[RMDB]
RNA sequence: GGGAACGACUCGAGUAGAGUCGAAAAACUGCCAUACGUGGCAGAAACACGCCUCACCAGGACUAAACAGCGUGUCUAAAAAACAGUCCUUCAUACCUGAUCUGGAGGGUAGAUCAGGAAUACUAAAAAAAUCGGGUGAAGUUCGCUUCACCCGAAAGUGAUAUAUCUCCUUCGGGAGAUAUAUCACAAAAGAAACAACAACAACAAC
Reactivity to 2A3 in 0.01 (KOAc 150mM, MgCl2 10mM, bicine 150mM(pH8.5), 24C), signal-to-noise 3, nucleotides 027 to 156: a000c000u000g000c000c000a030u030a070c180g080u030g010g020c010a000g000a000a010a000c000a000c000g010c000c000u040c020a050c020c040a010g000g010a000c000u030a090a070a020c020a010g000c020g010u010g030u040c140u050a020a010a010a010a000a000c030a010g000u000c030c000u080u110c060a080u050a160c000c000u000g010a000u000c000u020g070g040a080g050g050g030u070a010g010a000u020c030a010g010g040a000a010u090a050c070u150a020a020a020a010a020a010a110u020c000g000g000g000u000g000a000a010g000u030u080c120g020c110u000u000c000a010c070c000c000g000a000a000a000